[RMDB]
RNA sequence: GGGAACGACUCGAGUAGAGUCGAAAAAUGGGCAUUCGUGCCCAUGUGUUGGGGUCGGAGCUGAGGAUCGGACAUGCUCUGAAGCCUCCACGGAGCAACAGCCGAUCUACCCACCAGUGACGACGGAGGCACCCACCUACGCAGUUUCGACUGCGAAGGUAGCAAUCAGUUUCGACUGAUUGCUACCAAAAGAAACAACAACAACAAC
Reactivity to 2A3 in 0.01 (KOAc 150mM, MgCl2 10mM, bicine 150mM(pH8.5), 24C), signal-to-noise 2, nucleotides 027 to 156: a000u020g000g000g000c040a020u060u120c280g140u080g000c010c000c000a000u050g020u000g000u030u020g040g030g010g010u010c000g020g000a050g010c020u030g030a070g070g020a040u010c010g010g000a030c070a170u140g000c000u010c020u050g040a090a040g070c050c030u030c010c010a030c040g010g000a020g030c010a010a040c000a100g040c000c010g000a030u000c010u050a080c040c070c010a040c020c000a010g000u010g070a040c020g000a000c040g000g050a020g010g020c010a010c000c000c000a050c020c050u130a010c000g000c000a010g000u020u060u220c220g140a080c010u020g000c000g040a030a020
Reactivity to DMS in 0.01 (KOAc 150mM, MgCl2 10mM, bicine 150mM(pH8.5), 24C), signal-to-noise 1, nucleotides 027 to 156: a080u000g000g050g150c000a070u000u010c280g080u000g010c010c030c010a010u000g000u040g010u000u060g000g000g010g030u000c060g040g020a300g020c020u020g000a160g000g000a040u000c000g010g010a100c070a300u000g000c040u050c020u000g010a000a070g000c030c030u000c020c050a300c080g050g000a120g000c000a090a040c160a170g020c030c030g000a020u000c000u000a100c000c000c030a300c080c010a070g070u000g000a300c040g010a020c020g000g120a140g020g000c050a230c010c060c000a070c090c000u010a210c020g030c010a030g010u000u000u000c210g030a080c000u000g050c000g000a020a040
The record gives the reactivity of an RNA of 207 nucleotides to 2A3 and DMS. Source: RMDB library RNAMAK, as collected in RNAgym. 2A3 is a SHAPE reagent: it acylates the 2'-hydroxyl of flexible nucleotides of all four kinds.